[RMDB]
RNA sequence: GGGAACGACUCGAGUAGAGUCGAAAACUUUGGUUCCAGAGAGUCGUAGUGUAUAGCCAGAGAGCCAGUCAGAGGGCGCUAUCAUGCAAACUAGGGCUGGCUACUCUAGCACAGAAUCACAUCCCGACCGUAUUUAGCCCUUCGGGGCUAAAUACGGAAAAGAAACAACAACAACAAC
Reactivity to 2A3 in 0.01 (KOAc 150mM, MgCl2 10mM, bicine 150mM(pH8.5), 24C), signal-to-noise 1, nucleotides 027 to 126: c000u040u010u040g040g000u130u000c000c000a050g050a000g000a000g270u000c030g030u040a070g070u000g000u120a000u070a200g000c000c000a000g000a000g000a000g000c000c000a000g000u040c000a000g000a000g000g120g000c000g000c000u070a260u300c070a120u280g000c000a020a050a000c000u030a000g050g030g030c000u010g000g000c000u000a000c000u010c000u000a000g000c000a000c000a000g100a000a120u030c000a070c000a000u060c000c000c030g000a040